[RMDB]
RNA sequence: GGGAACGACUCGAGUAGAGUCGAAAAACGCAUCAUACGUGAUGCGAGAACUACAGUUCCGCUCCUCUAGCACACAGAGGUCAAUUGGGUGCGACCCCGCCCUCUCCCGUGGGUCAACGGGAACCAAAAAAGACCCUUUAGUUCGCUAAAGGGUCAACAUCCUCUUAAGGUUCGCCUUAAGAGGAUGAAAAGAAACAACAACAACAAC
Reactivity to DMS in 0.01 (KOAc 150mM, MgCl2 10mM, bicine 150mM(pH8.5), 24C), signal-to-noise 1, nucleotides 027 to 156: a110c000g000c010a000u010c000a080u010a110c300g010u010g020a010u010g000c020g000a040g040a080a040c040u000a080c030a070g000u000u000c000c050g000c080u010c080c020u020c130u010a090g020c030a040c040a050c090a080g010a080g000g000u000c030a050a060u010u000g000g010g000u000g030c030g000a180c020c010c020c010g000c110c010c010u040c070u000c000c030c070g000u040g000g020g010u010c080a030a020c040g010g030g030a040a130c100c050a060a080a070a100a100a120g000a040c000c000c010u000u000u000a010g010u000u000c300g000c000u000a020a010a010g000g040g060u000c000a000a060
Reactivity to 2A3 in 0.01 (KOAc 150mM, MgCl2 10mM, bicine 150mM(pH8.5), 24C), signal-to-noise 4, nucleotides 027 to 156: a000c000g000c000a010u000c000a020u060a130c190g090u060g020a030u060g000c030g000a050g020a030a050c110u200a100c060a090g010u020u020c020c010g020c030u040c010c000u020c030u050a060g060c040a010c010a010c020a090g010a010g020g000u020c010a030a090u090u060g050g010g000u030g030c050g300a300c010c000c000c000g030c010c000c000u030c010u000c000c000c010g020u020g000g010g060u100c040a000a010c000g000g000g020a010a010c030c030a000a030a070a080a000a020g000a000c000c000c030u010u000u000a020g010u040u050c170g000c160u010a010a000a000g000g000g010u000c000a000a020

Structure probing data (DMS and 2A3) for a 207-nucleotide construct. High DMS reactivity at an A or C suggests that its Watson-Crick edge is free. It was measured as part of the RMDB library M2RFPK.